[RMDB]
RNA sequence: GGGAACGACUCGAGUAGAGUCGAAAAUGUGGGGUUUGUGCUCUGACCUGACCCUCAGGCCCUGCCAGUGCCCUGGCUUCCAGGCAGAUCUGGGCAGGCAGGUCUGAGCCCCCGGAGCUGGGUAAGCCAUUCCGGAUAUGUUCGCAUAUCCGGAAUGAAAAGAAACAACAACAACAAC
Reactivity to 2A3 in 0.01 (KOAc 150mM, MgCl2 10mM, bicine 150mM(pH8.5), 24C), signal-to-noise 2, nucleotides 027 to 126: u210g030u140g020g040g000g040u120u210u150g160u200g010c010u000c020u050g010a040c000c010u030g220a300c030c020c020u020c030a040g040g040c070c000c040u000g010c000c030a100g080u040g090c010c010c000u060g080g000c000u110u050c060c070a080g020g000c000a020g000a100u030c020u040g040g000g010c000a030g010g000c000a000g000g000u000c010u020g000a000g000c000c000c000c000c010g040g020a030g000c020u020g010g100g080u160a040a030g000c010
Reactivity to DMS in 0.01 (KOAc 150mM, MgCl2 10mM, bicine 150mM(pH8.5), 24C), signal-to-noise 5, nucleotides 027 to 126: u020g010u000g010g010g000g020u010u000u010g030u010g020c020u000c020u000g010a060c010c010u000g000a160c060c220c020u000c050a040g000g000c170c050c030u000g000c000c030a130g000u000g010c080c030c040u000g010g010c100u000u010c090c090a110g000g010c030a080g000a110u010c030u000g010g010g000c060a060g010g010c010a020g000g010u000c010u000g000a030g010c010c010c010c010c020g000g000a100g020c030u000g000g010g010u010a100a090g010c080